[RMDB]
RNA sequence: GGGAACGACUCGAGUAGAGUCGAAAAGGCACGGCGUGUUAAAAGGGAGGAAGGGUCAGACCGCAGGACUUGCGGUGCGGUAUUGUGGAGACAUACCGCAAGGUUUCCAUCAAGCCUGAUGGUUACAUAUCAGUUCUCAUUUCGAUGAGAACUGAUAAAAAGAAACAACAACAACAAC
Reactivity to DMS in 0.01 (KOAc 150mM, MgCl2 10mM, bicine 150mM(pH8.5), 24C), signal-to-noise 8, nucleotides 027 to 126: g000g020c060a070c070g010g000c060g010u020g000u010u030a050a070a100a120g010g010g010a110g000g010a100a090g010g000g000u010c090a080g010a060c020c000g010c000a030g020g010a130c110u010u000g010c050g000g010u010g000c010g000g000u010a030u020u020g010u000g000g020a140g020a050c130a030u000a030c010c000g010c010a070a050g000g010u010u000u000c000c000a030u010c010a050a150g020c160c100u010g010a020u000g000g000u010u000a030c070a180
Reactivity to 2A3 in 0.01 (KOAc 150mM, MgCl2 10mM, bicine 150mM(pH8.5), 24C), signal-to-noise 8, nucleotides 027 to 126: g030g000c050a020c050g060g010c060g030u090g070u060u130a100a100a050a050g040g030g020a100g020g040a080a050g040g010g010u030c020a020g040a050c000c010g000c010a010g040g110a150c030u070u020g000c010g000g000u020g010c000g000g010u020a060u080u200g050u060g060g040a050g000a030c020a020u040a010c000c000g000c000a000a010g050g010u010u040u000c000c000a010u010c020a020a060g120c020c100u050g010a020u010g010g000u020u010a010c010a020